[RMDB]
RNA sequence: GGGAACGACUCGAGUAGAGUCGAAAACACCAACGUGCGCGGCUUCACCCUGGAGCGGGCCUAUCAGGUCUUCCCGGACCUGCCCAACACGGCGGAAAUCAUCAACCUCGAUCUGGAGUCGCUGGAACCAUGGUUAUAUCUUCGGAUAUAACCAUGGAAAAGAAACAACAACAACAAC
Reactivity to 2A3 in 0.01 (KOAc 150mM, MgCl2 10mM, bicine 150mM(pH8.5), 24C), signal-to-noise 4, nucleotides 027 to 126: c050a010c010c030a040a060c080g150u180g030c070g000c020g050g010c010u040u040c020a060c040c000c020u050g040g000a030g060c040g000g010g020c010c020u180a170u190c050a020g000g000u000c000u090u070c030c000c000g000g000a010c000c000u020g020c000c020c010a040a030c050a010c030g020g000c060g060g030a080a110a030u130c060a020u040c020a060a100c020c050u040c080g050a090u030c050u070g040g010a010g010u040c010g010c050u030g050g070a020a020
Reactivity to DMS in 0.01 (KOAc 150mM, MgCl2 10mM, bicine 150mM(pH8.5), 24C), signal-to-noise 5, nucleotides 027 to 126: c130a170c050c040a070a130c120g010u000g030c070g010c060g010g000c020u000u000c040a120c070c020c020u000g010g010a060g010c220g010g000g010c300c120u000a070u000c050a020g010g010u000c010u000u000c040c020c030g000g000a020c020c010u000g000c070c010c020a070a180c150a060c070g010g010c080g020g000a060a060a120u010c070a070u000c060a090a120c110c030u000c070g000a070u010c100u000g010g000a040g020u000c010g010c030u010g010g000a120a200

Overview: The record gives the reactivity of an RNA of 177 nucleotides to 2A3 and DMS. For 2A3 the reverse transcriptase was SuperScript II with manganese. The data come from the RNA Mapping Database (RMDB), library OK2TST. For 2A3, 7,026 sequencing reads were counted. The reactions ran in a buffer of 150 mM KOAc, 10 mM MgCl2 and 150 mM bicine (pH 8.5), at 24 C.